RNA sequence: GGGAACGACUCGAGUAGAGUCGAAAAUGACGAGUAAGAGAAGGAAGCAGAAGAGUCGGCGGUUGCUUCAGGGUCGCCUUCUCCGGAGGAUACUUGUCCACAGUUGUCUCCUGUAGCGUCGACUGCAGUAGCGUCAUAUCUUCGGAUAUGACGCUACAAAAGAAACAACAACAACAAC
Reactivity to DMS in 0.01 (KOAc 150mM, MgCl2 10mM, bicine 150mM(pH8.5), 24C), signal-to-noise 2, nucleotides 027 to 126: u010g010a050c030g000a040g030u010a050a130g010a020g010a030a010g020g020a070a300g010c050a070g000a140a080g000a050g010u000c010g000g030c010g010g000u010u020g000c010u000u000c040a050g010g010g000u000c070g000c080c010u000u000c010u000c020c150g020g000a060g010g000a170u010a010c080u000u000g010u000c030c220a110c150a060g010u000u000g000u010c040u000c000c000u000g010u000a150g010c050g010u000c030g000a020c020u000g040c180a140
An RNA of 177 nucleotides, treated with DMS and read out base by base. It was measured as part of the RMDB library OK2TST.